Structure probing data (DMS and 2A3) for a 177-nucleotide construct.
2A3 adducts were read by reverse transcription with SuperScript II with manganese.
High 2A3 reactivity points to a flexible backbone, as in loops and unpaired stretches.
Source: RMDB library OK2TST, as collected in RNAgym.
The RNA was probed in 150 mM KOAc, 10 mM MgCl2 and 150 mM bicine (pH 8.5) at 24 C.
The DMS profile rests on 888 reads.
High DMS reactivity at an A or C suggests that its Watson-Crick edge is free.
RNA sequence: GGGAACGACUCGAGUAGAGUCGAAAAAAGAGGCGGUGAAAGCCGGGACAACUCCGAUGAUGCGCCACAAUGUGGACAUCGUUCAGACUGUCUAUGCUACGGUCGACACUCCGAUCAUUACUCGUGACACCUCCACUGAGUUCGCUCAGUGGAGGUGAAAAGAAACAACAACAACAAC
Reactivity to DMS in 0.01 (KOAc 150mM, MgCl2 10mM, bicine 150mM(pH8.5), 24C), signal-to-noise 2, nucleotides 027 to 126: a070a060g010a130g000g030c190g010g010u000g000a060a180a300g010c010c010g000g000g010a010c020a020a040c230u010c030c020g040a000u010g000a030u010g000c300g000c000c030a010c010a170a110u010g050u000g000g010a030c020a000u010c010g060u000u000c030a040g000a030c240u000g030u000c020u000a060u030g050c200u000a160c020g020g000u000c020g020a300c070a040c070u000c060c030g010a080u010c060a090u010u000a080c070u000c000g000u010g010a250
Reactivity to 2A3 in 0.01 (KOAc 150mM, MgCl2 10mM, bicine 150mM(pH8.5), 24C), signal-to-noise 1, nucleotides 027 to 126: a060a000g060a070g040g010c130g010g010u050g040a100a010a000g000c020c070g010g020g000a020c030a070a000c010u050c040c010g010a000u030g000a010u000g010c290g010c090c050a030c040a080a300u300g010u000g020g010a000c000a030u000c000g000u090u020c010a010g020a000c030u000g040u020c010u030a080u130g020c040u090a070c050g020g000u010c010g020a030c000a010c040u030c060c010g050a080u060c010a000u090u120a090c030u000c030g050u020g060a030